[RMDB]
The record gives the reactivity of an RNA of 207 nucleotides to DMS and 2A3. Reactivities are given for positions 27 through 156. The data come from the RNA Mapping Database (RMDB), library RSTRND.
RNA sequence: GGGAACGACUCGAGUAGAGUCGAAAACCGUUUCCUGCUGAAGCCUUGUACCCCAGUCUACCCGUGCGUCUUCACUGAUGCGGUAGGCAACACUGUCCAUGUGCUGAGAGGUCCCAAGAGACAAUCAGCAGCCGCCUCACCGCGGUCCACAGAUCAACAGGGUGUAUAAGUUCGCUUAUACACCCUGAAAAGAAACAACAACAACAAC
Reactivity to DMS in 0.01 (KOAc 150mM, MgCl2 10mM, bicine 150mM(pH8.5), 24C), signal-to-noise 2, nucleotides 027 to 156: c020c030g020u000u000u000c020c010u000g000c010u010g010a070a190g020c020c040u000u000g040u000a070c010c010c000c020a130g030u000c020u010a070c030c010c070g050u000g030c040g060u000c000u010u000c120a140c140u020g020a070u000g020c000g040g000u000a010g020g000c010a090a090c060a050c020u000g000u000c030c050a180u020g010u010g000c000u000g000a060g010a130g070g000u000c010c040c040a160a170g040a120g010a030c020a130a210u000c000a030g020c020a090g030c010c040g020c010c030u000c210a130c050c070g000c050g020g060u000c020c070a100c070a140g000a140u000c000a040a250
Reactivity to 2A3 in 0.01 (KOAc 150mM, MgCl2 10mM, bicine 150mM(pH8.5), 24C), signal-to-noise 2, nucleotides 027 to 156: c010c010g000u050u040u000c010c000u040g040c060u030g090a090a020g030c020c020u040u030g050u090a060c010c000c010c010a030g000u030c020u050a040c000c010c060g190u060g040c030g050u020c030u090u170c120a170c210u090g010a050u050g010c000g020g000u010a010g030g000c000a000a010c070a040c040u090g050u060c040c030a130u100g010u020g090c050u030g030a050g000a080g090g080u020c040c030c020a100a020g080a020g010a080c010a020a090u020c000a000g000c000a010g000c000c000g000c010c020u060c010a030c010c010g010c000g000g000u000c000c000a100c030a040g090a060u120c000a020a070